Structure probing data (2A3 and DMS) for a 177-nucleotide construct. Source: RMDB library OK2TRN, as collected in RNAgym.
RNA sequence: GGGAACGACUCGAGUAGAGUCGAAAAUAACGCUGUAAUGCUUUUUCAAAGUCGUAUGCGUUAAAACAAUUUACUAAUACGAUAGCAUCUUCCAUUGCUUGUCCAGCACCUUGCCCCAUAUUAGGCGAUCAUAAGUAGCGUUCGCGCUACUUAUGAUAAAAGAAACAACAACAACAAC
Reactivity to 2A3 in 0.01 (KOAc 150mM, MgCl2 10mM, bicine 150mM(pH8.5), 24C), signal-to-noise 4, nucleotides 027 to 126: u030a020a010c010g000c020u020g100u170a060a070u100g030c000u110u060u070u100u170c160a100a040a020g010u050c020g040u100a020u070g020c010g020u030u060a030a050a020a020c070a080a110u130u160u180a060c030u100a050a060u050a070c040g060a060u040a050g010c010a030u040c030u080u000c030c030a070u030u090g020c040u030u060g020u040c020c010a010g010c030a060c020c000u020u110g030c000c000c000c010a030u070a120u270u200a060g070g000c040g010
Reactivity to DMS in 0.01 (KOAc 150mM, MgCl2 10mM, bicine 150mM(pH8.5), 24C), signal-to-noise 6, nucleotides 027 to 126: u000a010a030c050g020c010u000g000u000a100a080u010g000c010u010u010u010u010u020c220a070a050a060g000u010c100g020u000a050u000g010c040g010u000u000a030a060a120a130c230a070a090u010u010u000a090c050u000a130a080u000a050c070g000a030u000a060g020c030a060u000c070u000u000c050c060a050u000u000g010c060u000u000g020u000c050c040a070g000c030a070c070c040u000u000g000c040c010c020c070a050u010a120u000u010a080g000g020c120g000